This 207-nucleotide RNA was probed chemically with 2A3. The 2A3 profile rests on 687 reads. For 2A3 the reverse transcriptase was SuperScript II with manganese. Conditions: 150 mM KOAc, 10 mM MgCl2 and 150 mM bicine (pH 8.5), 24 C. Source: RMDB library OK3TST, as collected in RNAgym.
RNA sequence: GGGAACGACUCGAGUAGAGUCGAAAACGAUCAGUACGUUCGCGUACUGAUCGAAGCUACUGGAGACAGUAGCAAGUCUAAGACCUUGUUACGAGGAAACAAGGAAAAAUGGAGGAAGGGCGGACCUCCAUACUUAGACAACCUCGAACCGCCCAAACAUAGCCGAUCAGUUCGCUGAUCGGCUAUGAAAAGAAACAACAACAACAAC
Reactivity to 2A3 in 0.01 (KOAc 150mM, MgCl2 10mM, bicine 150mM(pH8.5), 24C), signal-to-noise 1, nucleotides 027 to 156: c010g000a000u000c000a020g000u020a000c010g010u040u130c210g020c000g030u000a000c000u010g000a000u000c000g000a010a000g030c000u000a000c000u000g050g000a080g010a060c000a000g000u000a000g000c000a000a000g010u000c010u000a000a000g030a170c010c000u020u010g000u030u060a130c110g140a070g130g190a120a000a040c050a030a000g060g000a040a090a120a060a030u050g000g000a010g030g000a010a250g040g000g000c000g020g060a180c020c000u000c010c000a030u030a020c010u010u000a000g010a000c000a030a130c070c020u060c050g040a060a050c000c000g180c000c000c020a000a000a000